RNA sequence: GGGAACGACUCGAGUAGAGUCGAAAAGGUGGGUUCGCCCACCCUUUGUCCUAAGUCAUUAACGAAUCUGAGUGGGUAGCCAACAGCUUAUCGGAAACGAUAAGACAUGGCUACCGCAGACUAUUAAUGAUAUGGAGCGGUGGCCAUUCGUGGCCAACACUAAGUCGUAAUUCGUUACGACUUAGUGAAAAGAAACAACAACAACAAC
Reactivity to DMS in 0.01 (KOAc 150mM, MgCl2 10mM, bicine 150mM(pH8.5), 24C), signal-to-noise 6, nucleotides 027 to 156: g010g050u000g020g010g030u000u010c300g030c010c010c010a020c000c000c000u010u000u010g010u000c010c010u000a070a300g010u000c020a010u000u000a010a030c050g010a070a030u000c000u000g010a110g030u000g030g030g040u010a020g000c010c000a030a130c100a220g000c010u000u000a010u000c000g010g010a180a110a300c010g020a010u000a010a010g000a040c040a300u000g010g010c000u010a000c010c000g000c020a010g010a030c020u000a090u000u000a000a030u000g010a030u010a300u010g010g000a080g010c070g010g020u000g010g030c010c000a110u000u000c180g030u000g030g020c020c000a010a130
Reactivity to 2A3 in 0.01 (KOAc 150mM, MgCl2 10mM, bicine 150mM(pH8.5), 24C), signal-to-noise 9, nucleotides 027 to 156: g020g000u000g010g020g040u050u160c240g140c020c000c000a050c010c010c010u100u140u170g080u030c000c000u030a120a050g020u000c000a010u010u010a030a040c130g070a200a300u010c010u020g080a100g150u300g130g080g000u020a010g000c000c000a050a030c060a180g030c010u000u000a000u000c000g040g000a120a040a040c010g000a000u000a000a000g040a060c020a070u050g000g000c000u000a000c000c000g000c000a000g000a000c030u080a010u060u000a000a010u000g020a010u000a090u200g060g020a090g090c120g080g120u070g020g000c010c010a040u100u100c230g120u100g010g000c000c010a010a000
Source information
An RNA of 207 nucleotides, treated with DMS and 2A3 and read out base by base. It was measured as part of the RMDB library RNAMAK. 2A3 adducts were read by reverse transcription with SuperScript II with manganese. Reactivities are given for positions 27 through 156. Conditions: 150 mM KOAc, 10 mM MgCl2 and 150 mM bicine (pH 8.5), 24 C. The 2A3 profile rests on 26,563 reads.